[RMDB]
RNA sequence: GGGAACGACUCGAGUAGAGUCGAAAACAACAAAACAAAACAUAGGGGAGUCAGGGUUCGGAUCUCCUACCCGAACCUAGGGUAACACUGACUGUGGAGGGGAAAAGAAAGAAAACAAAACAAAACAGAUAAUCAGUAGUUUCGACUACUGAUUAUCAAAAGAAACAACAACAACAAC
Reactivity to DMS in 0.01 (KOAc 150mM, MgCl2 10mM, bicine 150mM(pH8.5), 24C), signal-to-noise 3, nucleotides 027 to 126: c220a060a070c180a060a120a170a090c150a090a120a070a140c190a150u050a060g020g010g000g000a100g000u010c020a080g000g010g000u010u000c000g000g010a020u040c090u010c060c060u020a030c250c000c010g000a010a020c010c000u000a090g000g000g000u000a060a040c220a110c080u030g000a070c060u000g000u010g020g010a080g000g000g000g010a030a070a010a070g010a050a060a010g020a130a070a080a040c210a030a080a040a030c150a030a070a110a080c300a040
Reactivity to 2A3 in 0.01 (KOAc 150mM, MgCl2 10mM, bicine 150mM(pH8.5), 24C), signal-to-noise 8, nucleotides 027 to 126: c070a000a010c040a020a120a000a030c090a020a120a030a020c080a130u300a090g000g000g010g010a070g080u070c060a030g020g020g000u000u000c000g000g010a020u010c070u030c080c020u020a050c010c000c000g000a000a000c000c000u000a000g020g000g000u040a080a010c070a030c120u070g150a020c040u060g040u100g050g050a170g020g020g020g050a010a090a000a020g150a020a080a010g130a030a090a020a010c090a040a080a020a000c070a020a070a020a020c050a020